[RMDB]
RNA sequence: GGGAACGACUCGAGUAGAGUCGAAAAAGCAUCAUCUCCGUAAUAGUCGCUUCCUCCUUCGUAGUAGGAUGUUCCACUAAUGGAGUUGUUGGUAGUAGGGUGGCUAUUCUCUGGAGCAAGCCUCGUGAAGCUGGUAUGAGUUCGCUCAUACCAGCUUAAAAGAAACAACAACAACAAC
Reactivity to DMS in 0.01 (KOAc 150mM, MgCl2 10mM, bicine 150mM(pH8.5), 24C), signal-to-noise 2, nucleotides 027 to 126: a030g020c050a100u010c110a110u000c000u000c010c030g040u000a060a050u000a020g010u000c070g010c030u000u010c030c010u000c040c010u000u010c100g040u020a060g020u000a090g040g010a130u010g020u020u010c000c010a070c050u000a030a070u000g020g000a050g010u000u020g010u010u000g010g020u010a090g010u000a110g000g000g020u010g010g010c030u000a050u000u000c120u000c020u000g010g010a030g010c300a120a140g000c010c010u030c010g010u020g010